Chemical mapping of a 177-nucleotide RNA with DMS and 2A3. The 2A3 profile rests on 3,051 reads. For 2A3 the reverse transcriptase was SuperScript II with manganese. Values are in units of 0.01, from 0 to 300, in steps of 10. The RNA was probed in 150 mM KOAc, 10 mM MgCl2 and 150 mM bicine (pH 8.5) at 24 C. DMS adducts were read by reverse transcription with MarathonRT.
RNA sequence: GGGAACGACUCGAGUAGAGUCGAAAAGAUAUGGAGUGAUAGUUGACCAUUGCGUUGAAAUCGGAAACGAUGGAGCAAUGGAGAACAACUACACUCCUAAGUCAAAAGUCAGACUUCGGUCUGACAAGACGGAUAGUCUGUUCGCAGACUAUCCGUCAAAAGAAACAACAACAACAAC
Reactivity to DMS in 0.01 (KOAc 150mM, MgCl2 10mM, bicine 150mM(pH8.5), 24C), signal-to-noise 2, nucleotides 027 to 126: g030a090u000a300u010g020g000a020g030u060g000a140u000a000g010u010u020g010a140c000c000a010u000u000g000c030g000u020u000g020a070a110a010u000c000g000g010a140a170a150c000g000a040u000g000g010a040g000c000a000a000u010g000g000a050g010a090a100c010a000a000c000u000a010c000a010c000u000c000c020u000a010a030g010u000c090a140a100a200a100g000u000c010a000g000a020c000u000u010c130g020g000u000c000u010g000a000c040a020a070
Reactivity to 2A3 in 0.01 (KOAc 150mM, MgCl2 10mM, bicine 150mM(pH8.5), 24C), signal-to-noise 2, nucleotides 027 to 126: g020a000u100a050u190g000g000a000g010u040g090a300u000a010g020u020u010g080a160c000c010a000u000u000g050c040g300u300u080g050a030a050a000u040c010g000g030a020a000a080c030g000a020u030g000g030a030g000c000a010a000u000g000g000a030g000a030a020c000a000a000c000u010a010c000a010c000u030c000c000u020a070a010g050u000c010a030a030a010a160g000u000c000a000g000a000c020u020u150c300g040g000u000c000u020g000a000c000a000a010
Source: RMDB library TTRDEL, as collected in RNAgym.